This 207-nucleotide RNA was probed chemically with 2A3. The 2A3 profile rests on 926 reads. The RNA was probed in 150 mM KOAc, 10 mM MgCl2 and 150 mM bicine (pH 8.5) at 24 C.
RNA sequence: GGGAACGACUCGAGUAGAGUCGAAAAGGCAGGACUUACCAAGUCUGGGGGCCGAUGAGGGUGGGCUCAAAGUAGGGUUUUGACUUGAAAACUCAAGCUGUGACCCCAAAACGAUGGAGGUAAAUGAAAAAUCCAUCUGCCUUCGGGCAGAUGGAAAGUUUAUAGUACGGUUCGCCGUACUAUAAACAAAAGAAACAACAACAACAAC
Reactivity to 2A3 in 0.01 (KOAc 150mM, MgCl2 10mM, bicine 150mM(pH8.5), 24C), signal-to-noise 2, nucleotides 027 to 156: g040g000c020a010g050g000a060c040u100u080a140c140c080a090a020g050u030c060u100g010g000g030g050g070c030c170g000a010u030g030a040g020g010g060u080g000g000g020c030u020c100a070a090a000g060u110a010g030g040g000u060u090u090u150g030a040c000u010u030g060a080a050a070a070c070u020c030a020a000g020c020u020g050u100g110a080c000c000c000c000a030a050a010a010c030g080a070u040g030g030a030g020g060u090a020a080a150u160g070a080a070a020a010a000u000c000c000a000u000c000u000g000c010c020u000u000c020g040g000g010c000a000g000a000u000g020g000a000a000a000